[RMDB]
RNA sequence: GGGAACGACUCGAGUAGAGUCGAAAAGUGGCUGUGAAUGCAAUGUUUUUAGGAGCAACUUCAUUAUUGGCUAUAUUGAAUACAGAAAAAAUUCAAGGAGUCUUACUAUGGGUAAAUGGAAGUAUUGCAUAUAGGGGUUGGAGAGAAGUUGGUUAUACAUUUAUUUAGCAUUCGUGCUAAAUAAAUGAAAAGAAACAACAACAACAAC
Reactivity to DMS in 0.01 (KOAc 150mM, MgCl2 10mM, bicine 150mM(pH8.5), 24C), signal-to-noise 2, nucleotides 027 to 156: g040u000g010g060c000u000g020u000g020a090a110u010g010c020a060a090u000g010u000u000u000u010u020a130g040g010a150g020c030a090a080c040u000u020c030a090u010u010a110u000u000g030g010c050u000a080u000a120u010u010g010a030a060u020a300c080a160g020a010a030a090a110a090a100u020u010c020a060a090g000g010a050g020u010c040u010u000a040c060u010a080u000g000g000g030u000a010a040a070u000g010g020a040a060g000u000a020u010u000g010c050a080u000a140u010a060g010g010g050g020u010u000g030g020a050g000a050g010a020a170g010u000u010g000g010u000u010a160u010a150
Reactivity to 2A3 in 0.01 (KOAc 150mM, MgCl2 10mM, bicine 150mM(pH8.5), 24C), signal-to-noise 5, nucleotides 027 to 156: g060u050g010g000c050u020g030u040g120a090a030u030g010c030a020a080u040g030u030u080u040u080u120a100g020g050a040g080c020a040a060c010u200u150c060a070u020u170a040u080u070g020g000c010u020a020u010a060u260u040g010a020a020u080a110c100a050g230a100a150a060a020a020a030u050u030c010a020a010g050g020a010g070u000c010u070u080a040c020u050a050u080g050g000g000u060a050a070a040u060g010g000a000a010g010u030a030u040u080g010c020a010u070a020u080a130g000g010g000g020u020u030g020g010a020g000a010g000a090a010g010u030u020g010g000u040u030a050u020a080